This 177-nucleotide RNA was probed chemically with 2A3 and DMS. Reactivities are rounded to 0.1 and cut off at 0 and 3. The 2A3 profile rests on 1,386 reads. For 2A3 the reverse transcriptase was SuperScript II with manganese. The RNA was probed in 150 mM KOAc, 10 mM MgCl2 and 150 mM bicine (pH 8.5) at 24 C. DMS adducts were read by reverse transcription with MarathonRT.
RNA sequence: GGGAACGACUCGAGUAGAGUCGAAAAGAAAGCGCGACAGUUUCUACCUGAGCCCCGUAAGGUAGUUACUGGAGGGACAGAAUGUCUCGAGUCGUAUGACGGGGCAAAUGCGACGAGCGCGAAGAAAGGGAAAUACCAUGUUCGCAUGGUAUUUCCCAAAAGAAACAACAACAACAAC
Reactivity to 2A3 in 0.01 (KOAc 150mM, MgCl2 10mM, bicine 150mM(pH8.5), 24C), signal-to-noise 1, nucleotides 027 to 126: g120a010a070a000g040c130g000c000g000a030c010a000g000u000u020u000c000u000a000c000c000u010g050a060g030c000c000c000c000g030u040a050a030g000g000u000a000g010u000u000a000c000u030g000g010a050g010g070g020a010c010a050g210a130a030u080g010u010c000u030c000g020a000g000u010c020g010u040a070u070g020a010c000g010g000g020g010c010a000a000a050u150g010c000g000a020c020g030a050g040c000g020c050g050a000a030g100a040a070a020
Reactivity to DMS in 0.01 (KOAc 150mM, MgCl2 10mM, bicine 150mM(pH8.5), 24C), signal-to-noise 1, nucleotides 027 to 126: g000a010a180a260g010c200g000c060g000a220c000a000g000u000u000u020c000u000a030c000c000u010g000a100g010c040c080c000c010g060u010a100a020g000g000u060a010g000u000u000a040c000u020g000g000a300g000g000g000a000c100a030g000a120a170u000g000u000c000u000c000g000a090g020u010c010g000u010a040u030g000a010c080g000g000g000g000c000a020a020a010u040g000c050g010a120c030g000a100g000c000g040c040g000a270a070g000a070a100a100